[RMDB]
RNA sequence: GGGAACGACUCGAGUAGAGUCGAAAACAGAACUGGAUGGGCCGUGUGCUUAACCAGGACAAGAUCUCCAUCUCUCCAACGUUGUUGCCAACUCAUGAUUCUCCUAACCUGUGCUUGGAGAGACGUGCUACCAUAUAGGUGUUCGCACCUAUAUGAAGUAUGCUAUGUGUUUCGACACAUAGCAUACAAAAGAAACAACAACAACAAC
Reactivity to DMS in 0.01 (KOAc 150mM, MgCl2 10mM, bicine 150mM(pH8.5), 24C), signal-to-noise 1, nucleotides 027 to 156: c030a090g010a080a130c010u000g010g030a060u010g020g000g030c020c010g040u020g010u000g070c010u000u000a080a130c030c040a070g030g030a130c060a100a100g000a150u000c010u000c010c030a060u010c040u010c010u030c010c040a040a180c150g020u000u030g000u010u000g000c000c010a070a120c070u010c030a060u000g000a170u000u000c010u000c000c030u010a030a090c040c110u010g020u010g060c070u000u020g010g000a050g060a000g040a060c030g000u010g020c060u000a150c150c010a000u000a000u010a000g030g030u000g010u010u020c230g010c030a050c000c020u010a010u020a000u010g010a050a170
Reactivity to 2A3 in 0.01 (KOAc 150mM, MgCl2 10mM, bicine 150mM(pH8.5), 24C), signal-to-noise 2, nucleotides 027 to 156: c040a030g110a100a010c000u010g020g050a040u040g070g060g000c050c170g200u180g180u300g030c030u050u020a060a060c050c000a000g010g090a010c020a030a060g030a130u050c050u020c070c020a050u020c000u040c000u030c030c030a030a070c100g010u030u000g000u000u010g050c020c060a030a070c030u070c060a060u120g030a230u140u040c080u070c040c000u040a110a120c040c080u100g040u160g100c000u000u060g000g000a020g010a000g000a000c030g000u100g070c000u070a100c020c010a000u020a000u000a010g000g030u000g030u060u030c260g010c070a000c000c010u000a000u000a000u000g000a040a000